[RMDB]
This 177-nucleotide RNA was probed chemically with 2A3.
2A3 adducts were read by reverse transcription with SuperScript II with manganese.
Values are in units of 0.01, from 0 to 300, in steps of 10.
It was measured as part of the RMDB library OK1LIB.
Values cover nucleotides 27 to 126.
RNA sequence: GGGAACGACUCGAGUAGAGUCGAAAAGUUCUUCGUGGUGAAGCGUACAGUCAGUGGAUCGAUCACCUCAACUUUUUCGAGAAUGCCAAAGUAGGCCGGACCUUGCUUCAUCACGGCAUUCGCUCCGACCUCAGCUCGGUUUCGACCGAGCUGAGGUAAAAGAAACAACAACAACAAC
Reactivity to 2A3 in 0.01 (KOAc 150mM, MgCl2 10mM, bicine 150mM(pH8.5), 24C), signal-to-noise 2, nucleotides 027 to 126: g000u010u000c010u050u070c040g020u010g000g000u020g000a000a000g070c070g000u070a050c100a100g010u100c030a130g040u080g040g030a080u120c080g000a040u210c070a000c030c000u020c040a020a010c030u020u010u050u210u260c070g000a040g120a200a010u050g020c070c000a150a070a000g100u170a160g090g010c030c030g080g000a060c000c020u110u100g020c000u000u010c000a050u000c000a000c030g000g000c000a060u020u070c110g070c090u020c000c000g050